Structure probing data (DMS and 2A3) for a 177-nucleotide construct.

RNA sequence: GGGAACGACUCGAGUAGAGUCGAAAAGAUAUGGAGUGACUUCUUUUGACGGCUUGUUGUCGGAAACGACAACAGCCGAUAAGAAGCCACUCCUAAGUCAAAAGGAGUUUUGUUCGCAAAACUCCAAGUGUAGAAUAUACUUCGGUAUAUUCUACACAAAAGAAACAACAACAACAAC
Reactivity to DMS in 0.01 (KOAc 150mM, MgCl2 10mM, bicine 150mM(pH8.5), 24C), signal-to-noise 4, nucleotides 027 to 126: g000a020u000a180u000g010g000a030g010u010g010a020c000u000u000c000u010u000u010u010g020a260c130g020g000c000u000u010g030u000u000g010u000c010g020g000a030a030a100c010g010a020c000a000a010c000a010g020c000c000g010a010u000a000a010g000a020a010g010c020c000a000c010u000c000c000u000a000a070g000u010c000a090a120a170a170g000g010a030g010u000u000u000u010g010u000u010c250g010c000a000a000a010a010c000u000c000c010a030a020
Reactivity to 2A3 in 0.01 (KOAc 150mM, MgCl2 10mM, bicine 150mM(pH8.5), 24C), signal-to-noise 5, nucleotides 027 to 126: g010a000u030a020u090g000g010a020g010u010g010a020c000u000u030c030u070u240u300u300g300a270c060g000g010c050u150u300g040u010u000g010u000c000g010g000a020a030a010c010g000a000c000a010a000c010a000g000c020c000g000a010u020a010a000g010a000a000g010c010c000a000c000u000c000c000u010a000a000g000u000c010a020a040a100a260g010g010a010g010u000u030u010u030g090u040u140c300g040c130a000a040a010a010c000u000c000c000a010a010
Notes
The reactions ran in a buffer of 150 mM KOAc, 10 mM MgCl2 and 150 mM bicine (pH 8.5), at 24 C. It was measured as part of the RMDB library TTRDES.